[RMDB]
RNA sequence: GGGAACGACUCGAGUAGAGUCGAAAAGGGGCUGACUUGGAUUUCGACAGAUUUCUUGUCGCACAGAUAGCAUGCCAAGCGCUGCUUGUAAAACAGCAACAAAAAUAACUGUAAACAACACAGAUUACGCUCCAGCUUACGCUAAAGCUGCGUGAGUCCGUUAAUAAACCUUCGGGUUUAUUAACGGAAAAGAAACAACAACAACAAC
Reactivity to 2A3 in 0.01 (KOAc 150mM, MgCl2 10mM, bicine 150mM(pH8.5), 24C), signal-to-noise 2, nucleotides 027 to 156: g000g010g020g030c030u040g030a100c030u050u030g030g010a070u130u130u120c020g020a010c000a050g020a130u010u100u120c080u100u050g020u030c010g000c030a030c020a050g120a070u060a010g020c060a030u080g020c010c030a080a060g010c050g030c050u040g000c010u070u030g070u090a010a100a050a010c030a010g040c020a030a020c050a050a120a060a020a010u140a070a000c000u040g000u030a000a110a080c040a050a000c020a010c000a030g020a070u030u110a080c080g000c010u020c000c000a010g000c000u030u020a010c020g020c040u040a070a090a070g030c090u060g010c080g020u000g000a000g030u000